[RMDB]
RNA sequence: GGGAACGACUCGAGUAGAGUCGAAAAGCGCUCCUGAACGUGACUUCAGAAGACGGGCGCCGACAAGUUAGAUUGUCAAGGCGACAGUGAAGUGUCACUGGGUAAUCUAACUUACCAAUCGCCGGCGCGUUGAGUCACGUCAACAACCGUCGAGCGACCGUACCUCCUGAUUCGUCAGGAGGUACGGAAAAGAAACAACAACAACAAC
Reactivity to 2A3 in 0.01 (KOAc 150mM, MgCl2 10mM, bicine 150mM(pH8.5), 24C), signal-to-noise 2, nucleotides 027 to 156: g070c050g030c000u030c000c070u070g060a130a000c000g010u000g040a010c030u110u060c230a130g020a290a030g010a050c060g070g040g000c000g000c000c000g000a020c040a020a000g010u010u000a000g000a000u010u000g020u040c060a040a030g040g120c170g030a000c000a020g030u170g300a300a120g160u010g030u030c000a000c020u020g060g020g000u020a000a000u000c000u000a020a000c030u000u030a020c010c070a030a170u110c020g000c060c000g030g000c030g000c000g080u050u020g000a010g000u000c000a000c000g010u010c040a070a050c020a030a100c000c060g070u110c030g010a040g030c030g010a010